An RNA of 207 nucleotides, treated with 2A3 and read out base by base. The 2A3 profile rests on 350 reads. The RNA was probed in 150 mM KOAc, 10 mM MgCl2 and 150 mM bicine (pH 8.5) at 24 C. For 2A3 the reverse transcriptase was SuperScript II with manganese.
[RMDB]
RNA sequence: GGGAACGACUCGAGUAGAGUCGAAAAGAUCCUAGAGCAGGACAGAAAUAGCUAUAAAGGACAUUCUUGGGACAAUUGACGUUUAGAUAUGGAUUGUGGGGUUCGAUCAUAGUAUCAUAUCAAUGCAAAUUGUCCUAGCUCUGAUAAGCAUAUGUGAGCGACUAGUACUGUUCGCAGUACUAGUCGCAAAAGAAACAACAACAACAAC
Reactivity to 2A3 in 0.01 (KOAc 150mM, MgCl2 10mM, bicine 150mM(pH8.5), 24C), signal-to-noise 1, nucleotides 027 to 156: g010a050u120c000c000u040a020g000a040g040c040a020g000g040a020c040a000g180a000a140a020u220a070g010c030u020a000u200a110a140a060g040g000a010c040a010u070u040c130u180u140g010g000g000a000c000a030a000u010u010g070a210c020g010u050u110u200a050g000a030u000a000u020g090g000a010u110u000g000u180g000g010g050g110u040u180c020g100a030u100c030a000u000a090g040u000a070u190c000a000u000a000u100c020a040a000u120g000c020a000a000a160u050u000g010u000c000c000u000a000g000c000u000c000u020g010a020u080a050a000g000c060a090u170a000u300g100u230g050a010